[RMDB]
Conditions: 150 mM KOAc, 10 mM MgCl2 and 150 mM bicine (pH 8.5), 24 C. An RNA of 207 nucleotides, treated with 2A3 and DMS and read out base by base. Values are in units of 0.01, from 0 to 300, in steps of 10.
RNA sequence: GGGAACGACUCGAGUAGAGUCGAAAAGGUCUGAUUGUGGGAUGGCCUGAGGCUGGGAAUCACUGUGUAGCGGACCAGCUCAUGUUGACGGAACGUCCGCACUAAGCUUGACAUCAAUAUGGGUGCCAUGGAGGAGUCCACGGCAUUCAGGUUGGCCGUAUCAUUGACUGUUCGCAGUCAAUGAUACAAAAGAAACAACAACAACAAC
Reactivity to 2A3 in 0.01 (KOAc 150mM, MgCl2 10mM, bicine 150mM(pH8.5), 24C), signal-to-noise 5, nucleotides 027 to 156: g030g020u040c040u040g050a130u100u100g040u100g030g040g000a030u070g040g020c010c020u030g010a040g040g010c030u030g000g000g040a040a090u070c020a030c120u040g010u050g030u160a030g030c030g000g010a040c030c030a020g010c030u030c030a070u150g100u120u150g050a060c060g030g020a120a050c040g020u000c010c020g030c020a010c040u070a040a030g030c020u060u090g060a050c000a090u110c050a070a070u090a070u130g020g000g000u010g000c000c000a040u020g020g000a030g090g030a050g080u020c010c010a000c000g000g000c000a000u020u010c000a000g000g030u020u020g040g000c070c060
Reactivity to DMS in 0.01 (KOAc 150mM, MgCl2 10mM, bicine 150mM(pH8.5), 24C), signal-to-noise 1, nucleotides 027 to 156: g000g020u010c010u000g010a100u000u000g000u020g020g030g010a130u010g010g010c020c010u000g000a230g050g000c000u000g000g010g000a090a140u000c010a050c040u010g000u000g020u000a060g020c030g010g010a090c030c040a130g000c030u030c030a090u000g010u000u000g020a120c150g050g000a110a150c100g020u010c020c000g000c060a070c090u020a100a130g020c090u000u000g000a100c060a050u010c000a020a090u000a110u000g010g020g000u000g020c020c010a020u000g010g020a090g040g040a210g000u000c000c030a020c000g000g000c000a030u000u000c040a030g020g000u000u010g010g030c060c120